[RMDB]
RNA sequence: GGGAACGACUCGAGUAGAGUCGAAAAUAACGCUUCAUGUGAAGGCCGCUGGGACCAAUUAACUGCGCCCUCUGUUGCGGCUCUACAGUUAGGGUUUCACUCACUGGCCAGCUCUCCUUGGGGUAUAGCCAGUACGCGUAUUCGUACGCGUACUGGCAAAAGAAACAACAACAACAAC
Reactivity to 2A3 in 0.01 (KOAc 150mM, MgCl2 10mM, bicine 150mM(pH8.5), 24C), signal-to-noise 3, nucleotides 027 to 126: u060a070a020c070g000c000u020u070c070a100u120g160u110g150a120a030g080g020c090c020g050c070u030g000g000g080a090c000c050a120a180u170u100a060a010c040u050g020c000g010c060c010c010u090c020u080g230u230u060g070c070g000g000c010u000c010u050a020c010a010g030u040u130a050g050g010g030u020u030u050c090a080c030u000c010a000c070u080g030g000c000c010a010g000c010u030c010u000c000c090u030u140g050g000g000g010u190a070u090a170
Reactivity to DMS in 0.01 (KOAc 150mM, MgCl2 10mM, bicine 150mM(pH8.5), 24C), signal-to-noise 1, nucleotides 027 to 126: u000a180a110c220g000c000u000u000c000a030u000g020u010g030a050a110g020g020c000c110g010c190u010g000g000g000a020c050c010a030a140u060u000a020a040c070u000g010c100g020c000c000c000u020c300u010g000u000u000g010c160g020g000c000u000c090u050a040c100a000g000u000u000a180g000g000g000u000u000u000c030a080c070u000c030a030c120u000g000g020c000c030a130g040c100u000c040u000c050c040u000u010g030g000g000g010u000a100u000a150
Source: RMDB library OK1LIB, as collected in RNAgym. An RNA of 177 nucleotides, treated with 2A3 and DMS and read out base by base. The 2A3 profile rests on 1,055 reads. Conditions: 150 mM KOAc, 10 mM MgCl2 and 150 mM bicine (pH 8.5), 24 C. The DMS profile rests on 1,324 reads.